[RMDB]
Background: Chemical mapping of a 177-nucleotide RNA with 2A3 and DMS. DMS adducts were read by reverse transcription with MarathonRT. The 2A3 profile rests on 3,756 reads.
RNA sequence: GGGAACGACUCGAGUAGAGUCGAAAAGAUAUGGACUUACAUUUCAACAGCGUGCUAUCGGAAACGAUAGUCACGACAUGAAAGGUAAGUCCUAAGUCAAAGUUUAUUAUCUUCGGAUAAUAAACAAGACUGGACAUAAGUUCGCUUAUGUCCAGUCAAAAGAAACAACAACAACAAC
Reactivity to 2A3 in 0.01 (KOAc 150mM, MgCl2 10mM, bicine 150mM(pH8.5), 24C), signal-to-noise 2, nucleotides 027 to 126: g010a000u010a000u050g000g000a000c000u010u010a020c020a120u060u030u010c300a300a300c150a210g010c000g000u000g000c000u000a000u030c010g000g020a000a000a010c010g000a000u000a000g040u030c020a000c000g040a010c040a220u300g000a000a000a000g010g010u000a010a000g010u000c000c010u000a020a000g000u020c030a000a160a090g020u030u020u010a000u010u020a000u010c010u020u080c230g040g000a000u000a010a010u000a020a030a000c010a040a010
Reactivity to DMS in 0.01 (KOAc 150mM, MgCl2 10mM, bicine 150mM(pH8.5), 24C), signal-to-noise 1, nucleotides 027 to 126: g010a020u010a000u010g010g000a000c000u000u000a000c000a040u000u000u010c000a180a130c190a040g000c000g020u000g010c000u000a000u010c010g050g000a010a000a010c000g010a010u000a000g010u010c010a010c040g000a020c170a120u030g010a000a000a000g010g020u000a010a010g000u010c000c000u020a000a060g000u000c000a160a160a230g000u000u000u000a000u010u000a000u000c000u000u010c210g030g000a020u000a000a000u000a000a000a000c000a070a090